About this RNA: The record gives the reactivity of an RNA of 177 nucleotides to 2A3 and DMS.

RNA sequence: GGGAACGACUCGAGUAGAGUCGAAAACACCUGCGUAACCGAACGCGCGACUGAUGCGGUUGGGGCCGGUGGCAGUCGCGGCCGGAGUGACCGAUGCCAACGCCAUGAUCCGACCCGGCCGCGCACGUGUAGCCUACGUGUUCGCACGUAGGCUACAAAAAGAAACAACAACAACAAC
Reactivity to 2A3 in 0.01 (KOAc 150mM, MgCl2 10mM, bicine 150mM(pH8.5), 24C), signal-to-noise 1, nucleotides 027 to 126: c020a030c010c000u050g000c080g090u080a150a120c040c070g030a010a030c050g020c020g010c040g160a050c030u160g100a230u190g030c000g000g040u000u040g030g030g010g000c040c010g000g000u050g000g020c080a060g040u090c010g020c010g040g000c000c000g030g000a110g040u190g090a060c010c040g080a050u120g040c030c070a090a000c060g020c070c000a080u200g030a050u070c020c020g000a020c060c000c000g010g020c000c010g000c010g030c000a010c000g070
Reactivity to DMS in 0.01 (KOAc 150mM, MgCl2 10mM, bicine 150mM(pH8.5), 24C), signal-to-noise 2, nucleotides 027 to 126: c090a130c030c010u000g000c060g030u010a120a110c140c080g000a050a050c020g010c010g010c020g000a190c190u000g020a110u000g000c030g010g010u000u000g030g030g000g000c030c060g000g000u000g000g000c230a050g010u000c050g020c160g020g010c000c000g000g000a200g010u010g000a070c000c000g030a080u020g030c030c080a040a300c300g000c200c080a040u000g010a040u010c030c040g010a060c030c010c000g000g000c020c010g000c010g010c000a050c130g000
Source information: The reactions ran in a buffer of 150 mM KOAc, 10 mM MgCl2 and 150 mM bicine (pH 8.5), at 24 C. It was measured as part of the RMDB library OK2TRN.